[RMDB]
RNA sequence: GGGAACGACUCGAGUAGAGUCGAAAAACAUCGAGCGCGAGCAGCGCUGGGACGACGCUGACCUGGUAUGCGCGUGCGAUCUUCACUGCCGUUUCAACGGUAACCGUGUCAUCGCGCAACUGCCUAGCGAGUGUGGCUACUGGGAUUCUGGAAUUGACACAGAAGUCUAGUUCGCUAGACUUCUGUGAAAAGAAACAACAACAACAAC
Reactivity to 2A3 in 0.01 (KOAc 150mM, MgCl2 10mM, bicine 150mM(pH8.5), 24C), signal-to-noise 3, nucleotides 027 to 156: a000c050a070u160c100g020a000g020c000g000c040g030a100g150c120a010g000c030g000c010u020g020g020g000a040c120g010a010c010g000c080u060g040a100c020c020u030g000g010u070a060u220g050c030g000c000g000u020g020c070g010a020u030c130u150u090c090a040c030u050g000c010c000g020u070u300u220c240a240a070c010g000g000u020a100a100c090c080g010u010g030u030c010a010u030c060g010c000g010c010a010a050c020u040g000c000c000u050a030g020c030g010a040g000u080g050u080g000g020c000u010a030c020u040g050g030g010a060u090u000c030u060g000g040a070a070u060u090g010a010
Reactivity to DMS in 0.01 (KOAc 150mM, MgCl2 10mM, bicine 150mM(pH8.5), 24C), signal-to-noise 1, nucleotides 027 to 156: a030c060a140u000c040g000a070g020c010g010c020g000a130g020c080a110g000c000g020c010u000g010g000g000a130c000g020a040c030g050c040u010g000a080c030c030u000g070g000u030a060u000g030c020g020c070g100u000g010c010g000a020u010c080u000u020c060a080c000u000g010c000c000g000u000u000u030c210a130a280c000g030g000u000a030a040c100c090g030u010g000u000c300a100u010c010g020c020g000c010a070a050c040u030g000c000c020u000a110g050c060g000a100g020u000g020u010g010g000c010u000a040c020u000g000g010g000a080u000u000c000u000g020g010a080a190u000u000g010a300
Record summary: An RNA of 207 nucleotides, treated with 2A3 and DMS and read out base by base. For DMS the reverse transcriptase was MarathonRT. For 2A3 the reverse transcriptase was SuperScript II with manganese. Conditions: 150 mM KOAc, 10 mM MgCl2 and 150 mM bicine (pH 8.5), 24 C. The 2A3 profile rests on 1,504 reads.